Conditions: 150 mM KOAc, 10 mM MgCl2 and 150 mM bicine (pH 8.5), 24 C. This 177-nucleotide RNA was probed chemically with 2A3 and DMS.

RNA sequence: GGGAACGACUCGAGUAGAGUCGAAAAUCGGAUAUGUUCGCAUAUCCGAAAAUAAACUUGACACGCGGUCAAGAAAAACGCGAAAAUUAAAAGAACAAACAAAAACGAAGAUCUUCGGAUCUUCGAAGUAUUGGUGUUAGUUCGCUAACACCAAUACAAAAGAAACAACAACAACAAC
Reactivity to 2A3 in 0.01 (KOAc 150mM, MgCl2 10mM, bicine 150mM(pH8.5), 24C), signal-to-noise 2, nucleotides 027 to 126: u020c000g010g020a010u000a000u000g010u060u060c150g000c130a000u000a000u000c000c000g000a000a000a000a000u010a000a050a000c010u030u070g000a000c000a020c170g110c040g050g000u000c000a020a050g120a140a070a000a000a010c000g020c010g100a200a050a040a030u220u180a070a090a130a080g160a250a060c040a060a070a010c040a030a140a070a020a000c010g000a000a000g000a010u020c000u130u140c210g070g000a010u000c000u010u000c000g010a000a000
Reactivity to DMS in 0.01 (KOAc 150mM, MgCl2 10mM, bicine 150mM(pH8.5), 24C), signal-to-noise 1, nucleotides 027 to 126: u000c010g030g020a050u000a010u000g000u010u000c150g070c010a040u000a000u000c010c010g000a040a040a050a070u000a070a090a170c030u000u000g020a060c050a030c050g010c060g040g000u000c020a030a100g000a040a040a010a030a050c000g010c000g020a080a160a090a080u030u000a100a040a120a200g000a120a050c150a130a090a070c100a010a040a050a070a100c000g000a010a000g000a000u000c000u000u000c140g040g030a000u000c000u000u000c000g000a010a060
About this RNA:
The data come from the RNA Mapping Database (RMDB), library M2PK50.